Source information
Conditions: 150 mM KOAc, 10 mM MgCl2 and 150 mM bicine (pH 8.5), 24 C. The record gives the reactivity of an RNA of 177 nucleotides to 2A3 and DMS.
RNA sequence: GGGAACGACUCGAGUAGAGUCGAAAAUGCGCUCCUCGCCAAAGAGCGGGACGGCCUCAAAAGCAUCCUGGCCUCGUACGACGAGGAAGAGGGCAGCGCAGGUACGGGUACCGGUGCUGCGCAGACCGAAAAUUCGCAAGUUCGCUUGCGAAUUUUCAAAAGAAACAACAACAACAAC
Reactivity to 2A3 in 0.01 (KOAc 150mM, MgCl2 10mM, bicine 150mM(pH8.5), 24C), signal-to-noise 1, nucleotides 027 to 126: u050g010c000g020c030u020c000c030u000c020g020c000c000a190a170a000g050a040g050c000g000g000g000a060c190g090g000c020c000u080c010a190a160a000a000g010c020a040u010c000c060u130g280g000c040c010u010c000g050u110a070c140g030a000c000g000a020g050g030a060a040g070a050g050g130g000c000a000g000c000g000c010a000g000g000u010a000c100g220g050g160u020a060c000c040g000g060u000g050c000u030g000c000g000c040a000g040a070c000c080
Reactivity to DMS in 0.01 (KOAc 150mM, MgCl2 10mM, bicine 150mM(pH8.5), 24C), signal-to-noise 1, nucleotides 027 to 126: u010g000c040g040c040u000c020c010u020c020g000c020c040a100a210a220g000a030g030c000g010g020g010a000c190g010g000c010c020u000c300a040a140a100a230g000c020a200u000c000c000u000g000g040c190c010u010c010g020u000a270c120g010a030c000g000a010g020g000a030a080g010a190g000g000g000c010a020g040c000g050c000a010g000g000u000a010c040g010g000g030u020a010c010c000g040g060u000g000c000u000g000c020g000c040a070g000a160c050c030